Notes
Chemical mapping of a 177-nucleotide RNA with DMS. The RNA was probed in 150 mM KOAc, 10 mM MgCl2 and 150 mM bicine (pH 8.5) at 24 C.

RNA sequence: GGGAACGACUCGAGUAGAGUCGAAAAUGCCAUAGCCAGGCUUUUACACUGAAGCUGAAAAAAGAUGUGCCGCUGCCUGAAAUUGAGCAACUGCUGGCAACUCACAAUGACUGGGUUCGCGUUAUCCUGGUAUGUAAAGCUUCGGCUUUACAUACCAAAAAGAAACAACAACAACAAC
Reactivity to DMS in 0.01 (KOAc 150mM, MgCl2 10mM, bicine 150mM(pH8.5), 24C), signal-to-noise 2, nucleotides 027 to 126: u010g010c020c030a050u030a070g030c080c070a070g000g000c050u020u000u010u000a060c120a100c090u000g000a060a040g010c030u000g020a000a040a050a180a130a080g000a060u010g000u000g000c010c030g000c030u010g010c050c000u010g010a060a070a130u000u010g030a080g000c030a050a110c060u000g000c030u000g010g000c070a020a070c030u010c030a060c120a080a110u000g000a090c080u000g000g000g000u000u000c080g020c030g010u020u010a090u010c020c030

Values cover nucleotides 27 to 126.
DMS adducts were read by reverse transcription with MarathonRT.
It was measured as part of the RMDB library OK2TRN.
For DMS, 1,493 sequencing reads were counted.